[RMDB]
RNA sequence: GGGAACGACUCGAGUAGAGUCGAAAAACCUUAUUUUGAGAAGCUGAGGGAUUUGGCCCAUAGAAGCUUCAGCAACCGACUUUAAAUAGCACGGUGUUAAUACCAACGAGCAACUCGAAUGAUAAGUAAAACGUUGACAAGUUCGCUUGUCAACGAACGUAACAACGUGGUUCGCCACGUUGUUACGAAAAGAAACAACAACAACAAC
Reactivity to 2A3 in 0.01 (KOAc 150mM, MgCl2 10mM, bicine 150mM(pH8.5), 24C), signal-to-noise 1, nucleotides 027 to 156: a000c070c000u170u060a300u080u060u160u160g100a080g020a080a000g000c000u050g000a030g000g000g040a040u080u020u010g040g000c000c000c000a040u090a110g070a040a000g000c000u000u000c000a000g000c000a000a000c000c000g110a060c010u090u050u090a120a200a290u120a130g040c000a000c030g050g000u000g000u030u000a000a000u070a050c020c070a070a070c120g020a060g040c040a000a060c020u050c070g040a140a100u070g070a060u160a220a000g040u110a090a160a000a040c050g000u000u000g030a000c000a000a000g020u010u030c140g080c130u000u000g000u000c000a000a000c000g000a030a000
This 207-nucleotide RNA was probed chemically with 2A3. The RNA was probed in 150 mM KOAc, 10 mM MgCl2 and 150 mM bicine (pH 8.5) at 24 C. 2A3 adducts were read by reverse transcription with SuperScript II with manganese.